[RMDB]
RNA sequence: GGGAACGACUCGAGUAGAGUCGAAAAACCGCAUCGCGGAUGAGCCCGUCCAUGAACGACCAGUGCGCAGCCUGUUCGGGAAAAACCCCCACAUGGCGGAAGGAAGUGAAGCGGCCAUGGAAGGAAAAUAUCACGUCAUGUUCGCAUGACGUGAUAUAAAAGAAACAACAACAACAAC
Reactivity to 2A3 in 0.01 (KOAc 150mM, MgCl2 10mM, bicine 150mM(pH8.5), 24C), signal-to-noise 1, nucleotides 027 to 126: a000c030c010g000c100a140u110c120g000c020g020g060a050u050g050a030g060c030c010c000g040u080c040c030a080u070g040a110a070c030g010a030c020c010a020g030u070g120c090g020c110a020g000c000c000u000g070u020u060c060g000g020g030a050a060a050a150a060c030c000c000c010c000a000c000a000u070g070g000c010g000g040a060a010g090g040a060a030g060u140g060a070a020g070c000g070g010c020c000a060u040g020g030a040a060g010g050a050a120a030
Reactivity to DMS in 0.01 (KOAc 150mM, MgCl2 10mM, bicine 150mM(pH8.5), 24C), signal-to-noise 2, nucleotides 027 to 126: a080c050c000g020c040a140u010c120g020c010g030g010a150u000g000a150g010c030c030c040g000u000c000c030a030u000g030a090a090c040g000a070c030c030a040g000u010g000c070g030c080a130g000c050c010u020g020u020u010c060g000g010g020a040a070a010a140a200c030c000c000c000c020a170c040a030u000g020g000c000g010g020a110a070g010g000a150a120g010u010g000a090a140g050c050g010g010c020c010a020u010g000g010a100a080g000g000a110a050a060